This 177-nucleotide RNA was probed chemically with DMS and 2A3. The reactions ran in a buffer of 150 mM KOAc, 10 mM MgCl2 and 150 mM bicine (pH 8.5), at 24 C. For DMS the reverse transcriptase was MarathonRT.
[RMDB]
RNA sequence: GGGAACGACUCGAGUAGAGUCGAAAACACGAAAACCGGGAAAAGCGAAUUUCUGCCUUAUAAACACCGGAAUACAGACCAUUAGCGCCCGAUUUCGAAUAGGUAAAUCCCUACUUUCCAUGACAUAUCUAGUUGUACGAUUCGUCGUACAACUAGAAAAAGAAACAACAACAACAAC
Reactivity to DMS in 0.01 (KOAc 150mM, MgCl2 10mM, bicine 150mM(pH8.5), 24C), signal-to-noise 3, nucleotides 027 to 126: c140a160c040g010a090a050a030a100c090c000g000g000g000a100a070a100a160g000c000g040a100a120u000u040u000c020u010g000c030c050u000u000a170u020a110a080a030c140a090c090c020g000g000a130a100u030a170c060a070g030a060c080c080a010u000u010a140g010c010g000c010c010c060g000a040u000u000u000c090g000a080a070u010a070g000g030u020a010a080a090u000c050c000c020u010a030c120u000u020u010c000c000a130u010g000a110c100a050u050a100
Reactivity to 2A3 in 0.01 (KOAc 150mM, MgCl2 10mM, bicine 150mM(pH8.5), 24C), signal-to-noise 5, nucleotides 027 to 126: c100a000c030g030a010a010a000a070c070c000g000g010g030a030a090a040a050g020c050g050a070a070u050u050u020c010u090g040c010c020u220u160a120u130a150a160a020c100a030c040c060g030g030a000a010u150a040c030a000g050a010c010c030a050u050u060a020g010c020g030c050c030c020g010a010u010u030u030c010g020a060a020u040a110g020g020u090a070a050a040u050c010c000c000u020a070c000u040u080u020c030c030a050u080g060a070c030a060u150a020